[RMDB]
RNA sequence: GGGAACGACUCGAGUAGAGUCGAAAAGGGGUCGGAGCGGGAGGUCGAUAACUCUGAUGACCCACACCUGAAGCCUCCACGGGUGUGGCAAGGAGGAAGCGACCGAAGAACGCUCCGACGGAGGCACCCAAAACUUUAGAUGUUCGCAUCUAAAGAACAAAAUUUAGAUCUUCGGAUCUAAAUUUUGAAAAGAAACAACAACAACAAC
Reactivity to 2A3 in 0.01 (KOAc 150mM, MgCl2 10mM, bicine 150mM(pH8.5), 24C), signal-to-noise 1, nucleotides 027 to 156: g060g020g030g000u000c000g000g010a010g010c010g010g000g010a010g000g000u010c000g010a010u030a080a050c000u000c000u000g210a300u020g000a070c000c020c010a000c000a000c000c000u030g030a080a040g010c000c000u010c020c000a010c010g010g000g000u000g000u010g000g000c050a110a190g000g010a000g010g030a100a170g010c000g000a000c000c000g020a050a010g000a000a000c000g000c000u000c000c000g000a000c010g000g000a000g000g000c000a010c000c010c000a010a110a130a140c000u010u010u000a000g010a020u010g020u070u140c300g030c060a000u010c000u010a010a010a000g070a040a030

Source: RMDB library RNAMAK, as collected in RNAgym. The record gives the reactivity of an RNA of 207 nucleotides to 2A3. Reactivities are given for positions 27 through 156. Reactivities are rounded to 0.1 and cut off at 0 and 3.